[RMDB]
RNA sequence: GGGAACGACUCGAGUAGAGUCGAAAAGAUAUGGAGUCUAAUGAAUUGAUCGUUCCAGACAUGCCUGCGGUCUCGGAAACGAGACCCAGGCAACAGCUGGACGAUCAAUUCAUUAGACUCCUAAGUCCAAUAAAUCACUCUUCGGAGUGAUUUAUUGAAAAGAAACAACAACAACAAC
Reactivity to DMS in 0.01 (KOAc 150mM, MgCl2 10mM, bicine 150mM(pH8.5), 24C), signal-to-noise 2, nucleotides 027 to 126: g000a090u000a300u000g000g010a020g000u000c000u000a010a010u010g000a010a020u000u010g000a000u010c000g000u000u000c000c010a000g010a060c110a300u000g000c000c000u020g010c300g030g030u000c010u000c010g000g000a110a100a210c000g000a020g010a010c000c000c000a000g000g000c020a000a010c210a150g010c000u000g000g000a050c010g000a000u000c000a000a000u000u000c000a000u000u000a000g010a010c000u000c000c000u000a000a050g010u000c060
The record gives the reactivity of an RNA of 177 nucleotides to DMS. Source: RMDB library TTRINS, as collected in RNAgym. Values cover nucleotides 27 to 126.